[RMDB]
RNA sequence: GGGAACGACUCGAGUAGAGUCGAAAAGACAGGUCUUGCUGUGUUGCACAGGCUGGUUUCCUACUCCUGUCCUCAAUCUUCCUGCAUCAGCCUCCCAAAAUGCCGGGAUUACAGGUGUGAGCUACUAACGAUUUACCACGUUCGCGUGGUAAAUCGUAAAAGAAACAACAACAACAAC
Reactivity to DMS in 0.01 (KOAc 150mM, MgCl2 10mM, bicine 150mM(pH8.5), 24C), signal-to-noise 1, nucleotides 027 to 126: g010a070c080a070g010g000u010c040u000u000g000c020u010g020u000g040u000u000g010c050a060c250a050g020g020c060u000g020g000u000u000u000c030c010u000a110c040u010c010c010u000g010u000c020c030u010c080a090a070u010c050u020u000c010c040u010g020c040a040u000c060a140g020c040c040u010c010c010c040a040a040a110a100u000g030c080c050g020g010g010a110u000u000a080c100a020g000g000u000g010u000g020a040g000c120u000a110c110u010a090